[RMDB]
RNA sequence: GGGAACGACUCGAGUAGAGUCGAAAACGCGCUUCGGCGCGAAUCACGAUAUGGACCUGAAGCUCUUGGAUUUAUGGGUGGAACAUAUCGGAAACGAUAUGGGAGAGCCCAUUGUCAGAGCUACAGGUCCUAAGUCAGAGUACACUUUCGAGUGUAAUUGGAUACAUCAAUUCGUUGAUGUAUCCAAAAAAGAAACAACAACAACAAC
Reactivity to DMS in 0.01 (KOAc 150mM, MgCl2 10mM, bicine 150mM(pH8.5), 24C), signal-to-noise 2, nucleotides 027 to 156: c020g040c000g050c040u000u000c290g060g040c000g000c010g020a040a020u010c040a140c110g020a090u000a300u000g030g000a030c010c010u000g040a210a050g040c010u000c000u030u010g020g010a030u000u000u000a040u000g020g020g070u010g010g000a210a140c000a010u000a010u000c000g010g000a100a080a280c020g000a020u000a000u000g000g000g030a300g000a190g010c000c000c000a000u000u000g010u000c020a020g010a040g000c020u010a110c010a020g000g000u000c010c000u000a020a040g000u000c080a200g010a190g000u010a040c000a020c030u000u000u010c290g010a100g020u000g000u000a040a250
Reactivity to 2A3 in 0.01 (KOAc 150mM, MgCl2 10mM, bicine 150mM(pH8.5), 24C), signal-to-noise 1, nucleotides 027 to 156: c020g020c000g000c000u050u100c270g150g000c010g070c000g010a020a130u250c060a010c120g030a030u060a060u140g010g000a000c000c000u010g020a020a010g000c000u000c040u120u180g220g040a120u300u300u040a000u010g020g000g000u110g010g110a080a000c000a000u000a000u000c000g000g030a040a030a000c000g000a000u010a010u040g000g000g020a120g090a020g000c020c060c000a000u000u020g000u000c000a000g020a000g040c000u000a000c040a000g010g000u000c000c000u000a000a000g000u000c010a000g030a060g060u060a000c000a000c020u120u100u270c300g090a030g000u020g040u080a100a110
About this RNA:
An RNA of 207 nucleotides, treated with DMS and 2A3 and read out base by base. The data come from the RNA Mapping Database (RMDB), library RNAMAK. The 2A3 profile rests on 735 reads. The DMS profile rests on 3,964 reads. For DMS the reverse transcriptase was MarathonRT. The RNA was probed in 150 mM KOAc, 10 mM MgCl2 and 150 mM bicine (pH 8.5) at 24 C. 2A3 adducts were read by reverse transcription with SuperScript II with manganese.